[RMDB]
RNA sequence: GGGAACGACUCGAGUAGAGUCGAAAAGUCUCCUAGAGAGCUUGGCCGUCGGGCCUUACACCCCGACUUGCUGAGUUUCUCUAGGAGCGUCCCUUUCCCAGCCAGAGGUGGCUGGUCAAACAAUACCAAAACUCUUGCUAGUUCGCUAGCAAGAGAAGAUCUAAAGUGCGUUCGCGCACUUUAGAUCAAAAGAAACAACAACAACAAC
Reactivity to 2A3 in 0.01 (KOAc 150mM, MgCl2 10mM, bicine 150mM(pH8.5), 24C), signal-to-noise 1, nucleotides 027 to 156: g020u030c010u010c010c000u000a000g020a000g000a000g010c000u000u010g040g000c030c020g000u000c000g010g010g000c050c000u030u090a100c080a050c000c010c000c010g000a000c040u110u270g000c010u000g020a000g010u030u300u040c000u000c000u010a000g000g000a020g000c010g030u010c010c000c000u030u120u050c020c000c000a020g000c000c000a020g000a010g040g010u010g000g020c000u060g050g000u160c020a010a010a010c060a090a030u000a000c000c000a070a040a080a080c000u000c000u000u000g000c000u000a000g080u080u010c270g020c180u000a020g000c000a000a000g000a000g000a010a020